This 177-nucleotide RNA was probed chemically with DMS and 2A3. Conditions: 150 mM KOAc, 10 mM MgCl2 and 150 mM bicine (pH 8.5), 24 C. Source: RMDB library OK1LIB, as collected in RNAgym. For 2A3, 1,333 sequencing reads were counted.

[RMDB]
RNA sequence: GGGAACGACUCGAGUAGAGUCGAAAACUAUAAAGAUACCAGGCGUUUCCCCCUGGAAGCUCCCUCGUGUUCCGACCCUGCCGCUUACCGGAUACCUGUCCGCCUUUCUCCCUUCGGGAAGCGUGGCCGCAUAGACAGGGUUCGCCCUGUCUAUGCGAAAAGAAACAACAACAACAAC
Reactivity to DMS in 0.01 (KOAc 150mM, MgCl2 10mM, bicine 150mM(pH8.5), 24C), signal-to-noise 1, nucleotides 027 to 126: c100u000a210u010a160a080a030g000a210u060a150c090c000a050g000g000c080g010u020u030u000c000c040c080c000c050u020g000g000a070a150g000c060u000c000c000c000u000c060g030u000g000u010u000c040c010g000a140c000c080c000u020g000c040c020g000c020u010u000a110c040c020g000g000a130u000a060c020c070u000g000u000c000c000g030c000c060u020u050u000c020u000c000c020c000u000u000c070g000g000g000a090a030g000c020g010u020g000g010c040
Reactivity to 2A3 in 0.01 (KOAc 150mM, MgCl2 10mM, bicine 150mM(pH8.5), 24C), signal-to-noise 2, nucleotides 027 to 126: c000u020a000u160a300a250a010g090a030u150a110c020c040a010g060g000c010g010u000u060u000c000c000c000c000c000u000g060g010a030a020g020c000u000c020c000c000u020c030g050u040g090u110u050c000c000g020a030c030c000c000u030g020c020c000g020c010u030u050a120c010c010g020g000a040u060a150c000c020u030g010u020c020c100g020c000c000u010u040u010c020u060c010c000c000u030u060c030g020g000g030a040a030g030c030g010u030g000g070c050